RNA sequence: GGGAACGACUCGAGUAGAGUCGAAAAGCAUUGGGAAAGUUAAUCAAAAGUGCAUCAAAACUUUCCCUAAUCGAAAUCAAAAUCGUUAUGAUGCACUUUUGACAUCGAUUAAGAUGAAUAGACACAAUACUAUUGUGGAUUUCGAUCCACAAUAGUAAAAAGAAACAACAACAACAAC
Reactivity to DMS in 0.01 (KOAc 150mM, MgCl2 10mM, bicine 150mM(pH8.5), 24C), signal-to-noise 5, nucleotides 027 to 126: g030c120a080u000u020g000g020g000a060a070a140g000u000u010a110a110u010c030a010a010a020a010g010u000g010c010a010u010c020a040a050a070a100c080u000u000u000c000c010c000u000a050a040u010c050g010a040a060a080u000c230a060a070a130a100u000c060g010u000u010a130u010g000a010u000g000c000a010c000u000u000u000u000g000a070c040a020u000c010g010a130u000u000a090a110g010a020u000g010a090a060u010a070g010a150c110a060c200a050a090
Reactivity to 2A3 in 0.01 (KOAc 150mM, MgCl2 10mM, bicine 150mM(pH8.5), 24C), signal-to-noise 4, nucleotides 027 to 126: g000c020a060u090u200g020g000g030a030a070a060g060u100u150a110a070u060c020a010a020a000a000g000u000g000c000a010u020c030a010a110a050a110c000u020u030u020c010c000c000u020a010a050u100c020g040a080a010a010u140c060a060a040a030a130u070c030g050u090u060a090u250g000a000u000g000c000a000c000u000u000u010u000g000a000c000a000u010c010g120a160u230u210a140a070g000a010u010g040a030a060u100a100g090a010c020a000c020a110a130